Structure probing data (2A3) for a 207-nucleotide construct. Conditions: 150 mM KOAc, 10 mM MgCl2 and 150 mM bicine (pH 8.5), 24 C. Values are in units of 0.01, from 0 to 300, in steps of 10. Values cover nucleotides 27 to 156.
[RMDB]
RNA sequence: GGGAACGACUCGAGUAGAGUCGAAAAUAAGUUAGCCAGUCGUAAGGAACGUGGUACACUUAAGGGUAGUGGUGAUAAACGAUGACAUGGUUCUGGAGAUACAUUAACUACCUAGCUACAUGGCGGGAACAUCGUAAGGUCAUUAAGCAACUCAAUACCCUAGCAGCGUAUUCGUACGCUGCUAGGGAAAAGAAACAACAACAACAAC
Reactivity to 2A3 in 0.01 (KOAc 150mM, MgCl2 10mM, bicine 150mM(pH8.5), 24C), signal-to-noise 2, nucleotides 027 to 156: u170a040a000g030u030u150a000g060c000c000a050g060u120c120g070u240a180a170g030g080a100a000c000g030u060g020g000u040a060c040a010c090u110u030a210a170g010g020g020u070a060g000u020g040g050u000g020a020u050a040a090a020c000g030a050u030g060a010c020a090u170g140g080u210u000c000u120g030g010a120g030a110u000a030c040a120u010u120a120a000c000u000a020c000c000u000a020g000c000u010a020c020a030u050g090g000c020g040g020g020a010a000c000a070u010c030g060u010a170a000g070g000u020c000a000u040u040a030a010g010c000a040a120c030u050c000a110a040u040a130